[RMDB]
RNA sequence: GGGAACGACUCGAGUAGAGUCGAAAAGCCGACUAAGACUGGACGUCAUUAUGCAGGGAACUACUUUAGGGGUGUCUCGACUUGAAGUAGAUUAAUUGGGACUGGCUAAGCAUAGAGCCUGCCACUUGGCGCUAUGUGAGGUGAGAUAUUAGUGAAGCCCGAGAACAAAGUUCGCUUUGUUCUCGGGAAAAGAAACAACAACAACAAC
Reactivity to 2A3 in 0.01 (KOAc 150mM, MgCl2 10mM, bicine 150mM(pH8.5), 24C), signal-to-noise 1, nucleotides 027 to 156: g010c020c010g040a110c130u080a220a010g060a020c020u050g080g020a120c100g030u050c070a030u070u210a030u140g060c040a030g030g010g070a060a050c010u020a010c000u020u010u000a000g000g000g010g040u030g020u000c000u010c000g010a010c020u010u000g000a000a020g000u050a050g030a130u080u240a070a060u200u090g030g000g040a000c000u030g050g000c000u010a030a020g010c000a010u000a020g020a000g030c000c020u030g080c000c030a070c030u060u040g000g000c000g000c000u020a010u010g020u000g020a030g030g000u040g000a020g030a020u120a080u050u220a050g050u060g080a040a010g020
The record gives the reactivity of an RNA of 207 nucleotides to 2A3.